RNA sequence: GGGAACGACUCGAGUAGAGUCGAAAACAUGCGUUCGCGCAUGAAAAGGGGUCUUCGCCGAGUCGGUAAUUCGGUGAACUACUCCUGAAGCCUCCACGGGAGCACCGUGCCAGACUCCGCGAAGACGGAGGCACCCAAAUCAGUUCUUCGGAACUGAACCGUCAUAGUCUUUCGAGACUAUGACGGUAAAAGAAACAACAACAACAAC
Reactivity to 2A3 in 0.01 (KOAc 150mM, MgCl2 10mM, bicine 150mM(pH8.5), 24C), signal-to-noise 2, nucleotides 027 to 156: c020a010u000g040c010g030u070u110c300g010c000g000c090a010u000g070a110a060a020a000g000g000g000g000u040c010u000u000c000g000c010c030g000a000g020u030c100g060g110u240a100a110u270u130c010g000g000u020g000a050a040c050u230a070c000u210c000c000u000g000a030a010g000c010c000u020c010c010a040c010g010g000g000a000g000c000a000c020c030g040u060g200c100c070a020g000a020c010u000c000c000g000c000g000a000a000g000a000c010g000g000a010g010g000c000a050c020c020c010a060a100a020u040c000a000g020u000u000c010u000u140c220g170g000a000a000c000u000g010a020